About this RNA: Structure probing data (DMS and 2A3) for a 170-nucleotide construct.
RNA sequence: GGGAACGACUCGAGUAGAGUCGAAAAGCACGGGUCCUCUUCCUAGGUCCGGAGUCGAUCUCCAUCUGAUCCGUCCGGGCCCUCUUCGUCGGGGGAGCUCCCUCCCCGUCCUUCCCUUUUCUUAUUAUCCCUCAUGCGUUCGCGCAUGAGAAAAGAAACAACAACAACAAC
Reactivity to DMS in 0.01 (KOAc 150mM, MgCl2 10mM, bicine 150mM(pH8.5), 24C), signal-to-noise 7, nucleotides 027 to 129: g030c100a120c110g000g020g040u040c150c030u010c000u010u020c070c030u040a000g030g030u000c020c040g050g010a050g060u060c130g010a000u000c050u020c210c150a140u080c170u040g010a050u010c020c280g000u030c030c060g040g010g100c030c040c060u000c060u000u070c110g060u000c030g030g030g000g010g030a000g050c140u020c040c010c020u010c000c010c000c010g000u000c030c080u040u040c040c000c060u030u010u030u010c040u080u030a150u060u050a110u050c110c050
Reactivity to 2A3 in 0.01 (KOAc 150mM, MgCl2 10mM, bicine 150mM(pH8.5), 24C), signal-to-noise 6, nucleotides 027 to 129: g040c050a020c090g010g000g010u000c000c000u020c020u040u030c000c000u050a030g000g000u000c000c000g010g000a010g100u280c050g000a000u010c030u090c100c020a190u070c110u110g020a010u000c030c070g060u000c010c000g050g000g000c010c000c000u070c030u140u130c040g090u020c020g000g000g000g000g010a020g010c020u060c020c000c000u040c010c000c000c000g030u030c000c000u010u030c000c000c000u010u080u020u000c050u050u090a190u040u060a110u090c030c000

Background:
For DMS the reverse transcriptase was MarathonRT. 2A3 adducts were read by reverse transcription with SuperScript II with manganese. The DMS profile rests on 18,685 reads.